[RMDB]
RNA sequence: GGGAACGACUCGAGUAGAGUCGAAAAGAUAUGGAAUAUGGGGAGUCGGAAGUGUCGGAAACGACAUCGGCGACUUUGAUCCCGCUAUUCCUAAGUCAAAAUCGCUCGACCUUCGGGUCGAGCGAAACUAUAUCCAUGCCUUCGGGCAUGGAUAUAGAAAAGAAACAACAACAACAAC
Reactivity to DMS in 0.01 (KOAc 150mM, MgCl2 10mM, bicine 150mM(pH8.5), 24C), signal-to-noise 1, nucleotides 027 to 126: g010a030u010a300u000g020g000a050a000u000a030u030g010g010g020g010a020g010u030c000g010g010a130a150g000u000g010u000c000g010g000a060a120a140c010g000a010c000a000u000c300g000g000c030g020a030c010u000u010u000g000a130u030c010c020c010g050c230u000a030u000u000c010c000u000a030a150g010u000c040a070a060a130a090u000c000g050c000u010c030g010a010c030c000u010u010c300g000g000g000u010c010g000a000g020c000g000a000a000a030